[RMDB]
RNA sequence: GGGAACGACUCGAGUAGAGUCGAAAAUACAACAAUCUUGCACCAUAUGCAGGUGUUAAGCAAAAUGAUAGAUUGUUAUCAGCAACACAAACACAAUUAAUACAACAAUGGUAUCCAUGGUUAACAACCAUAGUCCGCAAUUCGUUGCGGACUAUGGAAAAGAAACAACAACAACAAC
Reactivity to DMS in 0.01 (KOAc 150mM, MgCl2 10mM, bicine 150mM(pH8.5), 24C), signal-to-noise 3, nucleotides 027 to 126: u000a120c120a100a040c030a060a020u000c000u010u030g010c090a040c040c030a100u000a190u010g050c210a080g040g030u000g010u000u000a010a080g020c180a040a080a110a120u000g010a070u000a010g010a050u000u000g010u000u000a050u000c120a090g010c060a030a000c040a060c090a090a030a050c100a020c160a110a040u050u000a060a050u000a050c130a040a040c060a060a030u000g010g010u010a020u010c050c050a060u000g000g000u000u000a100a120c150a100a100
Reactivity to 2A3 in 0.01 (KOAc 150mM, MgCl2 10mM, bicine 150mM(pH8.5), 24C), signal-to-noise 3, nucleotides 027 to 126: u150a020c040a050a020c010a010a060u030c000u000u040g010c010a000c040c020a060u150a110u300g100c080a080g000g060u030g020u080u160a050a020g040c050a100a090a030a170u160g030a030u060a060g050a030u010u080g000u080u020a050u080c010a000g130c020a040a050c020a030c020a120a130a030c030a000c040a130a090u180u140a120a050u170a070c040a040a000c030a040a130u090g030g030u080a020u040c020c000a020u010g100g000u120u120a090a030c050a020a030

This 177-nucleotide RNA was probed chemically with DMS and 2A3. The DMS profile rests on 1,362 reads. Source: RMDB library OK2TRN, as collected in RNAgym. High 2A3 reactivity points to a flexible backbone, as in loops and unpaired stretches. The RNA was probed in 150 mM KOAc, 10 mM MgCl2 and 150 mM bicine (pH 8.5) at 24 C.